[RMDB]
An RNA of 177 nucleotides, treated with 2A3 and DMS and read out base by base. For 2A3, 2,172 sequencing reads were counted. Source: RMDB library OK2TRN, as collected in RNAgym.
RNA sequence: GGGAACGACUCGAGUAGAGUCGAAAAGUCUAGCGAAGGGAUCCCACCCGGGAGACACGCAAGUCGCGAAUUAAGCCGACCGGCCAAGGUCAAUAGCAGAACUCAACUGCAUGAGUAAGCUAGACGACCUAUCCAUAGCGUUCGCGCUAUGGAUAGGAAAAGAAACAACAACAACAAC
Reactivity to 2A3 in 0.01 (KOAc 150mM, MgCl2 10mM, bicine 150mM(pH8.5), 24C), signal-to-noise 2, nucleotides 027 to 126: g010u000c010u020a020g010c010g070a220a140g000g030g040a040u010c020c000c000a060c020c000c020g010g030g000a060g000a000c040a010c060g010c020a070a020g070u070c020g030c010g060a160a270u270u100a190a020g000c040c000g020a010c020c020g030g000c020c030a080a030g020g000u000c000a000a040u080a090g010c030a000g040a100a050c060u080c210a070a150c010u050g010c020a020u080g020a000g070u040a020a010g000c000u010a000g010a000c000g020a030
Reactivity to DMS in 0.01 (KOAc 150mM, MgCl2 10mM, bicine 150mM(pH8.5), 24C), signal-to-noise 2, nucleotides 027 to 126: g010u000c000u000a000g000c000g020a190a070g030g040g020a080u000c000c000c010a300c300c030c000g010g030g050a130g020a040c000a060c060g010c060a070a070g020u000c080g010c020g000a110a130u010u010a120a110g040c030c010g000a070c020c300g020g020c050c040a110a200g000g030u000c000a050a050u030a110g030c000a020g010a140a080c160u010c170a070a120c030u020g030c040a090u030g010a040g010u020a080a180g000c000u000a010g000a030c040g000a130
For 2A3 the reverse transcriptase was SuperScript II with manganese.
For DMS the reverse transcriptase was MarathonRT.
Values cover nucleotides 27 to 126.
High 2A3 reactivity points to a flexible backbone, as in loops and unpaired stretches.
The reactions ran in a buffer of 150 mM KOAc, 10 mM MgCl2 and 150 mM bicine (pH 8.5), at 24 C.